[RMDB]
RNA sequence: GGGAACGACUCGAGUAGAGUCGAAAAAUAGCAUCACGAACCGGAACCACAGUUAUACAUUGUUUAGAAAGCUACACUUCAAAGACUUGUGGUAAUUGUGGAAAUCUACAAACAUGUGAUGUUGAUAGAACCUUUAGGUGUAAAGUAUGCGGAUAUGGCCUAACAGAUAAUUCGUUAUCUGUUAGGCAAAAGAAACAACAACAACAAC
Reactivity to 2A3 in 0.01 (KOAc 150mM, MgCl2 10mM, bicine 150mM(pH8.5), 24C), signal-to-noise 3, nucleotides 027 to 156: a000u120a000g000c000a000u010c030a000c030g060a060a080c110c050g050g020a090a200c000c000a000c000a000g000u000u010a050u060a020c000a010u030u050g020u090u190u030a040g030a040a040a020g070c080u160a040c100a040c070u030u050c010a060a080a000g000a030c010u070u100g010u010g060g030u000a000a000u010u000g000u010g020g000a040a090a060u000c010u040a040c130a060a140a000c030a090u290g000u020g020a010u000g000u010u010g010a020u040a080g060a060a080c010c000u080u120u090a110g000g040u030g010u080a030a040a020g060u120a060u210g110c090g020g060a050u160a090u300g150
Reactivity to DMS in 0.01 (KOAc 150mM, MgCl2 10mM, bicine 150mM(pH8.5), 24C), signal-to-noise 3, nucleotides 027 to 156: a110u000a050g010c020a030u000c020a050c000g020a240a130c110c060g010g010a140a260c000c010a000c010a020g020u020u000a030u000a070c040a050u000u000g010u010u000u010a280g010a030a030a040g010c040u000a170c160a300c060u000u000c020a120a220a210g000a060c000u000u000g000u000g040g020u000a000a030u000u000g000u010g000g010a050a020a100u000c080u000a150c030a070a070a040c060a100u000g000u010g000a030u010g000u000u000g000a170u000a090g000a050a030c030c010u000u000u000a060g010g030u010g000u000a050a080a110g020u000a060u000g010c030g010g000a190u010a090u010g010